[RMDB]
RNA sequence: GGGAACGACUCGAGUAGAGUCGAAAACUUCAUAAGUUCUGUGAAAAGAAGGUAUACUCCAAAGUUUGUAACGGCUUCUCAAAAGUCACUUAUCUUAAGUGGAAGCCCUUCUAAUACUUACACAAAGAUCUGGCUUAUGAUUCGUCAUAAGCCAGAUAAAAGAAACAACAACAACAAC
Reactivity to 2A3 in 0.01 (KOAc 150mM, MgCl2 10mM, bicine 150mM(pH8.5), 24C), signal-to-noise 1, nucleotides 027 to 126: c020u150u100c080a060u070a250a060g030u140u120c140u180g120u100g070a160a090a070a030g020a030a010g000g010u090a020u040a110c020u020c000c000a000a080a190g040u080u200u110g030u090a070a060c020g000g000c010u070u000c150u060c110a180a120a020a000g010u000c000a000c060u040u140a090u150c000u090u090a120a150g000u030g040g000a030a010g060c000c000c000u010u010c000u000a070a130u050a110c050u070u030a070c020a030c020a020a070a000g040
Reactivity to DMS in 0.01 (KOAc 150mM, MgCl2 10mM, bicine 150mM(pH8.5), 24C), signal-to-noise 2, nucleotides 027 to 126: c060u000u020c080a060u010a110a090g020u000u010c090u000g010u010g020a090a110a130a090g010a030a010g010g000u000a090u000a180c040u000c020c030a050a060a060g020u000u000u000g000u000a050a100c250g020g000c020u000u010c100u010c240a060a080a060a070g010u020c050a030c080u000u000a040u000c060u010u010a020a090g000u010g000g000a020a060g020c080c000c040u000u020c040u020a080a060u010a090c100u000u000a060c070a050c070a070a070a180g010